[RMDB]
RNA sequence: GGGAACGACUCGAGUAGAGUCGAAAAGAUAUGGAUCGCGACGAUCACCGCCUGCUAUAAUCUCGGAAACGAGGUAGCAGGUGGUGGGAGCGAUCCUAAGUCAAACAGGGGUCUUCGGACCCCUGAAGUGGAUACUGUGGUUCGCCACAGUAUCCACAAAAGAAACAACAACAACAAC
Reactivity to 2A3 in 0.01 (KOAc 150mM, MgCl2 10mM, bicine 150mM(pH8.5), 24C), signal-to-noise 1, nucleotides 027 to 126: g010a020u110a000u110g000g000a000u010c000g020c000g090a300c010g000a170u000c010a000c000c000g010c020c010u070g030c000u030a060u100a300a300u160c000u010c020g050g060a110a110a070c020g030a020g050g020u000a010g000c010a020g000g000u020g000g020u000g000g000g000a000g000c000g000a000u000c010c000u010a030a000g020u000c030a040a090a030c000a020g040g000g030g030u000c000u070u110c300g110g000a020c000c000c000c020u040g000a010a010
Reactivity to DMS in 0.01 (KOAc 150mM, MgCl2 10mM, bicine 150mM(pH8.5), 24C), signal-to-noise 1, nucleotides 027 to 126: g010a000u000a300u000g000g010a010u000c000g030c000g010a040c280g000a030u000c010a000c000c010g020c000c020u000g000c000u000a040u000a290a100u000c000u020c000g010g000a140a040a180c010g000a000g020g000u000a010g000c000a010g010g030u010g040g020u000g000g030g010a000g000c000g000a000u000c010c010u000a020a090g010u000c020a060a110a270c000a000g020g020g010g030u000c000u000u010c190g010g000a020c000c000c000c000u000g000a010a020

Annotation
Conditions: 150 mM KOAc, 10 mM MgCl2 and 150 mM bicine (pH 8.5), 24 C. An RNA of 177 nucleotides, treated with 2A3 and DMS and read out base by base. High DMS reactivity at an A or C suggests that its Watson-Crick edge is free. The data come from the RNA Mapping Database (RMDB), library TTRDEL. For 2A3 the reverse transcriptase was SuperScript II with manganese.